Notes
The record gives the reactivity of an RNA of 207 nucleotides to 2A3. The RNA was probed in 150 mM KOAc, 10 mM MgCl2 and 150 mM bicine (pH 8.5) at 24 C.
RNA sequence: GGGAACGACUCGAGUAGAGUCGAAAAAGGUGCUUUCCAGCGGAACCCUGACCGACACCGAGCGGAUCAACGACCUGGUCGCCGCGGCCCGCAAGUCCGUGGUGCUGGACAGCAGCUGGGGAAUGAUGGACUUCGUGCGGCGGAUGCAGUCGCUGGCGGAUAGCCCUUAGUUCGCUAAGGGCUAUCCAAAAGAAACAACAACAACAAC
Reactivity to 2A3 in 0.01 (KOAc 150mM, MgCl2 10mM, bicine 150mM(pH8.5), 24C), signal-to-noise 1, nucleotides 027 to 156: a030g030g010u030g030c020u040u030u050c010c000a000g010c010g120g040a050a090c000c000c030u030g130a060c040c020g010a030c040a060c110c030g010a070g030c020g050g050a110u050c040a050a050c020g030a040c010c050u010g020g060u040c030g020c010c000g010c000g000g040c000c030c050g060c070a030a020g040u000c010c060g090u060g030g080u130g030c010u000g000g090a000c010a040g090c000a000g000c030u120g000g000g000g070a120a040u200g050a010u070g040g000a000c030u010u030c030g010u020g020c020g040g000c010g050g000a020u130g060c000a000g010u120c020g040c070u010g000g000c000